RNA sequence: GGGAACGACUCGAGUAGAGUCGAAAACGAGUGAGGCUUAUCCCGGGGAUCGGCCUCCGCUCCUCCAUGGUGGACUCCAGGACCCCCAAAAGGAGGGGGGUGGGCCUUGGACCUCCGGGAGCCAUGGCAUUGCAUAGAUGUUCGCAUCUAUGCAAUGAAAAGAAACAACAACAACAAC
Reactivity to DMS in 0.01 (KOAc 150mM, MgCl2 10mM, bicine 150mM(pH8.5), 24C), signal-to-noise 3, nucleotides 027 to 126: c070g020a130g010u010g010a090g000g010c030u010u010a180u000c010c010c030g020g000g000g010a030u000c020g010g000c000c000u000c170c010g000c010u000c000c020u000c000c000a170u000g000g030u010g000g010a130c060u000c150c170a130g000g000a200c040c010c030c000c000a030a070a120a110g020g000a030g010g010g000g000g000g040u000g000g000g000c010c010u010u020g010g010a040c030c020u000c010c000g000g000g000a030g010c020c020a080u010g010g010
Reactivity to 2A3 in 0.01 (KOAc 150mM, MgCl2 10mM, bicine 150mM(pH8.5), 24C), signal-to-noise 2, nucleotides 027 to 126: c040g010a060g140u200g070a080g020g010c040u160u160a060u170c000c020c030g040g000g000g000a050u050c030g000g000c000c000u000c000c010g230c030u000c000c000u000c020c000a030u030g000g030u060g020g010a040c020u050c110c070a170g090g120a270c010c000c000c000c010a060a060a020a060g010g000a000g000g000g000g010g010g010u080g030g010g000c000c030u010u040g110g020a020c000c000u000c000c020g000g020g020a000g000c000c010a010u010g060g000
The record gives the reactivity of an RNA of 177 nucleotides to DMS and 2A3.
Values cover nucleotides 27 to 126.
DMS adducts were read by reverse transcription with MarathonRT.